[RMDB]
This 177-nucleotide RNA was probed chemically with DMS. For DMS, 793 sequencing reads were counted.
RNA sequence: GGGAACGACUCGAGUAGAGUCGAAAAAAAAAGAUAUGGAUGUAGCAUACGCGAAGAACAUUACCGAGGCAUAUUCGGAAACGAAUAUGUACAGUAAUGGGAGCGUCCUACAUCCUAAGUCAAAAAACUCUUGGUAUUUGUUCGCAAAUACCAAGAGAAAAGAAACAACAACAACAAC
Reactivity to DMS in 0.01 (KOAc 150mM, MgCl2 10mM, bicine 150mM(pH8.5), 24C), signal-to-noise 1, nucleotides 027 to 126: a020a050a090a140a170g000a010u000a060u010g000g000a020u010g030u000a020g000c300a010u030a300c000g000c000g000a020a130g000a070a300c000a010u000u000a010c000c010g040a300g000g000c000a000u000a000u010u000c000g000g000a000a030a010c000g010a040a000u000a000u000g000u000a030c000a000g000u000a000a000u000g000g000g000a020g010c000g000u000c200c010u000a010c000a000u000c000c000u000a000a050g000u030c000a000a040a070a140a070a100
Values cover nucleotides 27 to 126.